[RMDB]
RNA sequence: GGGAACGACUCGAGUAGAGUCGAAAAUCGUGGCAACCGACAACAGGACGUCGUUGCCGAAAGGGCGCUGGGCACCGACAUCUAGGAUGAACCCACAGCCACGCCCCGACGUUAUGCCAUGGCGAAGCUGAAGGUAAAAAUUCGUUUUUACCUUCAGAAAAGAAACAACAACAACAAC
Reactivity to 2A3 in 0.01 (KOAc 150mM, MgCl2 10mM, bicine 150mM(pH8.5), 24C), signal-to-noise 9, nucleotides 027 to 126: u050c010g010u030g000g010c020a050a060c080c060g060a050c040a200a030c050a110g100g100a040c040g000u020c000g020u010u030g020c010c010g020a030a020a000g060g010g000c050g010c100u070g010g010g010c030a020c030c020g030a040c020a090u070c060u090a050g110g030a150u070g070a100a100c010c000c010a030c030a020g010c000c000a010c020g010c000c010c000c000g020a020c010g010u040u050a070u160g020c020c010a040u070g050g000c040g030a040a010g030
Reactivity to DMS in 0.01 (KOAc 150mM, MgCl2 10mM, bicine 150mM(pH8.5), 24C), signal-to-noise 9, nucleotides 027 to 126: u010c030g040u000g000g010c010a090a100c130c040g020a050c050a090a130c140a170g010g010a080c130g010u000c020g010u000u000g000c020c010g010a040a050a080g010g010g010c030g020c160u000g010g000g000c030a050c080c030g010a080c040a040u000c050u010a100g010g010a100u010g010a100a130c030c010c020a090c150a140g000c010c020a080c030g000c030c010c020c030g000a080c090g010u000u000a060u000g010c030c040a070u000g010g010c060g010a100a110g010